[RMDB]
RNA sequence: GGGAACGACUCGAGUAGAGUCGAAAAAACCGCCGCCCAUUUGUGAAGCGUGCGACAUGAUCAUGUACCAGUGCCCGUGUUUUGAUUUUAAUGCUUUAAAGAAAUCGUGCGCUGAGAGGACCUUCGCUGAUGAUUAUGUUAUUGAAGGUUUAGAUGGAAGAGUCCAAAAUUUCGAUUUUGGACUCUUAAAAGAAACAACAACAACAAC
Reactivity to DMS in 0.01 (KOAc 150mM, MgCl2 10mM, bicine 150mM(pH8.5), 24C), signal-to-noise 2, nucleotides 027 to 156: a090a060c040c070g030c010c010g010c020c000c010a180u000u010u030g050u000g010a100a050g030c050g020u000g020c000g000a040c060a040u000g020a100u010c040a070u000g030u000a100c020c020a050g040u010g000c020c060c040g010u020g000u000u000u000u000g000a210u010u000u020u000a050a150u010g020c090u010u000u010a070a060a300g000a050a050a020u000c000g000u000g000c030g020c050u010g000a110g020a160g020g010a040c020c030u000u000c050g020c090u000g000a060u010g000a110u010u000a070u010g020u020u000a060u000u000g000a010a100g010g000u000u010u000a070g020a180u010g000g000
Reactivity to 2A3 in 0.01 (KOAc 150mM, MgCl2 10mM, bicine 150mM(pH8.5), 24C), signal-to-noise 1, nucleotides 027 to 156: a040a030c020c040g000c000c000g000c000c020c020a220u210u130u080g010u050g010a080a000g000c040g000u000g030c020g010a000c000a040u020g010a000u050c020a010u010g070u120a090c040c000a000g000u000g040c000c030c030g060u030g010u030u180u070u020g060a120u000u010u230u300a260a150u270g030c050u200u190u080a050a160a000g070a000a040a000u050c010g010u000g000c000g000c010u010g040a060g010a040g070g040a010c000c010u030u010c040g140c110u040g020a000u030g010a030u040u030a060u120g020u150u000a120u100u200g110a010a000g000g000u100u130u110a010g010a100u060g050g000